The data come from the RNA Mapping Database (RMDB), library M2PK90. Structure probing data (2A3 and DMS) for a 177-nucleotide construct. DMS (dimethyl sulfate) methylates the pairing face of unpaired adenines and cytosines. The RNA was probed in 150 mM KOAc, 10 mM MgCl2 and 150 mM bicine (pH 8.5) at 24 C.
RNA sequence: GGGAACGACUCGAGUAGAGUCGAAAAUCUAAGUGCGUAACACACACUCAGACUGUACGACAGUCUGACACACACAUACGCUAGUGUAUCGUGUGUGUGAUAUCGAUGUAGCACGAAAAUGAAAGAAGUUAACUAGGAUUUUCGAAUCCUAGUUAACAAAAGAAACAACAACAACAAC
Reactivity to 2A3 in 0.01 (KOAc 150mM, MgCl2 10mM, bicine 150mM(pH8.5), 24C), signal-to-noise 9, nucleotides 027 to 126: u030c030u040a180a030g000u000g040c020g120u160a170a000c000a000c010a000c000a010c070u020c010a000g000a000c010u020g020u150a140c160g170a090c210a000g000u000c000u000g010a000c010a000c000a000c000a000c000a010u020a020c020g100c200u180a130g120u070g020u300a030u050c100g000u010g000u000g000u000g000u000g020a030u030a040u130c120g050a080u030g030u070a010g000c000a000c030g020a060a030a000a030u240g050a060a060a080g120a120a020
Reactivity to DMS in 0.01 (KOAc 150mM, MgCl2 10mM, bicine 150mM(pH8.5), 24C), signal-to-noise 9, nucleotides 027 to 126: u010c030u000a100a170g010u000g010c000g010u010a110a060c070a070c080a100c090a100c140u000c010a010g000a020c000u000g010u000a140c280g010a150c010a010g000u000c000u000g000a030c120a020c010a010c000a000c000a020u000a000c010g010c220u010a090g020u010g010u000a020u000c120g020u000g010u000g010u000g010u000g000a090u010a070u010c110g000a080u000g010u000a160g010c010a010c000g000a060a060a080a070u010g010a070a090a100g010a100a110